The record gives the reactivity of an RNA of 177 nucleotides to DMS and 2A3.
For DMS, 2,167 sequencing reads were counted.
RNA sequence: GGGAACGACUCGAGUAGAGUCGAAAAGUUAGAGGGAUAAGCGAAGGUACUAGCUAUUUUGUGAGUUCCUCGGGCACUAUCAAAAACACAUGCCCAAUAAAGAAAGUCAAUAGCGACGUUAGGAGAGCCGGCACUAUAUUUUCGAAUAUAGUGCCGGAAAAGAAACAACAACAACAAC
Reactivity to DMS in 0.01 (KOAc 150mM, MgCl2 10mM, bicine 150mM(pH8.5), 24C), signal-to-noise 2, nucleotides 027 to 126: g030u070u040a080g000a020g000g030g000a040u000a000a300g020c010g010a080a040g010g060u000a090c200u040a180g000c170u010a100u000u010u040u000g010u010g000a300g020u000u000c000c010u010c050g030g000g000c020a100c120u000a110u010c130a070a100a100a130a070c080a070c120a080u010g000c000c000c000a110a140u070a040a030a090g000a090a050a060g020u070c050a040a010u040a060g000c130g000a050c040g000u020u010a020g000g000a190g000a130g000
Reactivity to 2A3 in 0.01 (KOAc 150mM, MgCl2 10mM, bicine 150mM(pH8.5), 24C), signal-to-noise 3, nucleotides 027 to 126: g170u180u200a010g010a000g030g010g000a030u050a110a000g010c050g010a080a010g020g030u080a080c020u040a040g100c040u060a140u060u090u020u020g050u010g030a090g000u010u020c020c000u020c000g020g010g000c040a040c040u130a120u230c130a030a040a010a020a000c060a000c010a130u050g000c000c010c030a020a010u210a010a040a020g150a040a030a030g000u000c030a040a150u070a080g110c070g080a050c010g050u060u090a020g050g020a090g000a020g050
The 2A3 profile rests on 1,435 reads. Conditions: 150 mM KOAc, 10 mM MgCl2 and 150 mM bicine (pH 8.5), 24 C. It was measured as part of the RMDB library RFM100.